[RMDB]
RNA sequence: GGGAACGACUCGAGUAGAGUCGAAAAAUAAAAGAGAGUAGAUGAUUCGCGUUAAGUGUGUGUGAAUGGGAUGUCGUCACACAACGAAGCGAGAGCGCGGUGAAUCAUUGCAUCCGCUCCUAAAAAAGAUAUCUACUUAGUUCGCUAAGUAGAUAUCAAAAGAAACAACAACAACAAC
Reactivity to 2A3 in 0.01 (KOAc 150mM, MgCl2 10mM, bicine 150mM(pH8.5), 24C), signal-to-noise 3, nucleotides 027 to 126: a000u100a000a040a010a010g030a000g000a000g010u030a010g010a020u010g000a000u020u000c010g010c010g010u020u080a020a020g000u020g000u010g000u000g010u000g030a020a030u020g000g030g000a010u020g060u100c100g000u000c010a000c000a000c000a030a000c020g010a020a000g010c010g020a030g000a010g020c010g000c010g000g050u010g000a000a010u020c010a010u010u030g000c000a010u000c010c000g000c000u010c000c010u200a150a130a010a010a000a000
Reactivity to DMS in 0.01 (KOAc 150mM, MgCl2 10mM, bicine 150mM(pH8.5), 24C), signal-to-noise 6, nucleotides 027 to 126: a090u010a060a070a080a110g000a030g010a030g010u010a300g010a020u000g000a020u000u000c010g010c010g010u000u010a040a070g010u010g010u000g010u010g010u000g000a040a060u010g000g010g010a020u000g000u000c220g010u000c000a010c010a010c010a010a040c080g010a060a080g010c010g010a180g000a120g020c010g000c070g000g010u000g010a020a010u000c020a010u000u000g000c020a010u000c010c000g010c010u000c000c050u010a000a030a060a080a050a070